[RMDB]
RNA sequence: GGGAACGACUCGAGUAGAGUCGAAAACUGAUUCGACAGGUACUGGUUUAUUUUUCUCAGCCUUGCAGCUGGCAGUCAACGCCGUGUCAUUGCUGCAGAAGAAGACCAAGACGGCGCCAACUGAGAGGCAGGCCGGCGUGCCGGAGCUCAUCGAGAGCACGUCAUAUGAUUUCGAUCAUAUGACGUGAAAAGAAACAACAACAACAAC
Reactivity to 2A3 in 0.01 (KOAc 150mM, MgCl2 10mM, bicine 150mM(pH8.5), 24C), signal-to-noise 2, nucleotides 027 to 156: c010u050g040a130u060u080c040g050a020c020a100g010g030u070a060c030u050g030g000u020u060u090a130u060u080u020u020u000c010u000c000a000g010c000c010u020u020g000c020a090g100c050u080g010g000c030a070g110u230c120a120a050c100g000c010c000g070u050g040u030c040a010u000u050g000c000u020g000c040a000g020a020a000g020a000a000g030a020c010c010a030a020g070a060c000g020g000c020g000c000c000a160a120c130u210g060a080g030a060g230g000c000a010g080g070c040c010g040g000c020g010u020g000c000c000g010g020a030g010c000u010c050a130u170c130g070a040g000a010g130
Reactivity to DMS in 0.01 (KOAc 150mM, MgCl2 10mM, bicine 150mM(pH8.5), 24C), signal-to-noise 1, nucleotides 027 to 156: c050u000g010a120u010u000c000g010a080c010a040g040g050u000a040c050u000g040g000u000u010u000a120u020u010u010u000u000c010u000c050a060g000c000c000u000u000g040c020a100g020c010u000g070g050c040a240g000u020c200a070a140c080g040c020c010g000u000g000u000c050a000u000u000g040c000u010g010c050a050g010a130a090g010a050a070g000a060c050c030a040a110g000a100c050g000g020c020g000c030c020a060a150c030u000g010a100g000a140g060g010c000a050g040g040c000c000g030g020c010g050u000g060c020c020g000g000a130g040c000u000c010a110u000c030g000a150g000a190g020